RNA sequence: GGGAACGACUCGAGUAGAGUCGAAAAACAAUGGAUUAGCAAAUGCAUUGAACAGGGUUGGAAAGAUGCUACAAGCUAUUUCAGAUGUUCGAAUUAUGCAAUCCAGCAAACAGCUUGUAACAUUAGAAAAAUUUUAGGUGUUCGCACCUAAAAUUUUAAAAGAAACAACAACAACAAC
Reactivity to DMS in 0.01 (KOAc 150mM, MgCl2 10mM, bicine 150mM(pH8.5), 24C), signal-to-noise 1, nucleotides 027 to 126: a080c090a070a080u020g000g010a000u000u000a210g020c080a030a100a080u000g010c170a020u000u000g000a050a060c050a050g010g000g050u000u000g000g020a080a100a190g000a050u000g000c010u000a080c100a040a040g030c010u000a080u000u000u000c060a130g000a100u000g020u010u010c080g020a060a090u000u010a090u040g000c030a010a020u000c010c030a080g000c220a040a030a060c130a050g000c020u000u000g000u020a050a020c020a000u010u000a080g010a030

This 177-nucleotide RNA was probed chemically with DMS. Reactivities are given for positions 27 through 126. It was measured as part of the RMDB library OK2TRN. The reactions ran in a buffer of 150 mM KOAc, 10 mM MgCl2 and 150 mM bicine (pH 8.5), at 24 C.